Notes:
This 177-nucleotide RNA was probed chemically with 2A3 and DMS. For DMS the reverse transcriptase was MarathonRT. Values cover nucleotides 27 to 126. The RNA was probed in 150 mM KOAc, 10 mM MgCl2 and 150 mM bicine (pH 8.5) at 24 C.
RNA sequence: GGGAACGACUCGAGUAGAGUCGAAAAUGAAAUAAAGUGUACCAAAUGGUAGGUACACACCAAGUGUGCGGUGGUCGCACACAACCAGCAGUCAAUAGACACUGCAAAACCUAACCAAAGAAAAAAACUAUUAAAUGAAGUUCGCUUCAUUUAAUAGAAAAGAAACAACAACAACAAC
Reactivity to 2A3 in 0.01 (KOAc 150mM, MgCl2 10mM, bicine 150mM(pH8.5), 24C), signal-to-noise 2, nucleotides 027 to 126: u050g030a020a010a040u150a100a110a030g000u000g000u020a000c010c000a010a100a180u200g160g020u110a060g000g000u000a000c000a000c000a000c010c000a070a070g010u010g000u000g030c030g000g140u210g080g200u230c020g000c000a000c000a000c000a000a060c010c020a020g000c000a010g020u060c020a080a050u060a190g070a060c030a010c050u020g000c000a040a030a010a040c010c040u070a030a040c030c040a000a100a140g100a110a070a050a000a000a000a020
Reactivity to DMS in 0.01 (KOAc 150mM, MgCl2 10mM, bicine 150mM(pH8.5), 24C), signal-to-noise 2, nucleotides 027 to 126: u000g000a130a030a040u000a090a170a220g000u000g000u010a000c020c010a110a180a180u000g010g010u000a060g000g020u010a000c000a000c000a130c150c120a050a110g020u000g010u000g000c000g010g030u020g000g000u000c030g000c000a000c000a010c020a060a100c220c110a120g030c030a000g020u030c030a110a120u000a080g000a150c170a070c010u030g000c000a060a040a040a160c090c080u010a070a060c050c020a100a160a120g020a000a000a060a040a060a050a300